[RMDB]
RNA sequence: GGGAACGACUCGAGUAGAGUCGAAAAGAUAUGGACAUCCCUAUACCCAUGCGCUUCGAUAAGAAUCAUGUCGGAAACGACAUGAAUUCUUUUGACGAAGCCAUGGGUAUAGGGAUGUCCUAAGUCAGUAGUAUAGAGCGUUCGCGCUCUAUACUACAAAAGAAACAACAACAACAAC
Reactivity to DMS in 0.01 (KOAc 150mM, MgCl2 10mM, bicine 150mM(pH8.5), 24C), signal-to-noise 1, nucleotides 027 to 126: g000a040u020a300u020g000g010a000c000a000u000c000c000c000u000a010u000a000c000c000c000a000u000g000c240g010c020u000u000c010g010a120u000a040a000g000a000a010u000c000a010u000g000u000c000g020g000a160a090a260c040g010a000c010a020u000g000a050a020u000u000c000u000u000u000u010g030a180c110g020a020a000g010c000c000a000u000g000g000g000u000a000u000a000g000g000g010a000u000g000u000c000c000u020a030a060g020u000c070a140